[RMDB]
RNA sequence: GGGAACGACUCGAGUAGAGUCGAAAAAUCAUUCGAGUGAGCACAAAGAGUAGCAUAAGCUCUCCUUUGACAUCUUCACCAACCUCUCAUCGUUCCCUUCUCUGUAAUAACGUCGUUUUGCAAAACUUCAUAAACAAUUCUUCGGAAUUGUUUAUGAAAAAGAAACAACAACAACAAC
Reactivity to 2A3 in 0.01 (KOAc 150mM, MgCl2 10mM, bicine 150mM(pH8.5), 24C), signal-to-noise 1, nucleotides 027 to 126: a000u050c010a010u070u020c010g010a000g060u000g010a000g010c000a010c030a080a040a000g050a000g070u190a010g020c010a060u050a300a030g000c000u000c000u020c020c040u080u000u000g000a010c000a090u030c050u100u050c020a020c030c000a030a080c010c000u010c020u050c020a000u010c020g040u000u000c000c000c000u090u010c050u010c010u040g100u050a030a150u080a250a040c080g150u040c050g020u010u040u000u120g070c040a040a010a060a120c030u000
Reactivity to DMS in 0.01 (KOAc 150mM, MgCl2 10mM, bicine 150mM(pH8.5), 24C), signal-to-noise 1, nucleotides 027 to 126: a130u000c090a050u040u000c020g020a040g000u010g020a050g000c200a050c030a050a080a040g010a050g000u010a050g020c020a020u020a120a250g010c000u000c020u000c050c040u000u010u000g000a060c080a110u020c120u010u000c020a060c030c150a100a110c120c010u000c000u000c040a220u000c030g000u000u000c000c010c010u000u000c030u000c030u010g000u000a150a080u010a060a120c090g000u000c050g020u000u000u000u010g000c090a010a080a080a120c120u000
Chemical mapping of a 177-nucleotide RNA with 2A3 and DMS. It was measured as part of the RMDB library RFMREP. Conditions: 150 mM KOAc, 10 mM MgCl2 and 150 mM bicine (pH 8.5), 24 C.